[RMDB]
RNA sequence: GGGAACGACUCGAGUAGAGUCGAAAAGGUACGUUGUAAAUCAAUUUCGAUAUAAGAUGCUUUUAACUCAUUAUGACUCUUAUCAUAUGCUUGAAACGUAUGCUCUGGUGCAUAGCCACUUGCGCCAGUUGCGCCACAGGUUCGCCUGUGGCGCAACAAAAGAAACAACAACAACAAC
Reactivity to 2A3 in 0.01 (KOAc 150mM, MgCl2 10mM, bicine 150mM(pH8.5), 24C), signal-to-noise 2, nucleotides 027 to 126: g050g000u070a020c030g000u030u040g040u040a000a010a010u040c010a020a070u010u120u130c060g040a030u030a000u040a120a000g040a070u150g050c140u100u120u070u170a050a150c070u250c170a090u150u260a130u190g120a220c000u000c030u010u000a050u010c040a060u010a040u230g020c040u000u120g050a010a010a010c000g000u000a000u030g010c000u000c000u030g000g010u020g000c000a030u070a060g100c100c000a120c170u010u040g000c000g000c000c000a000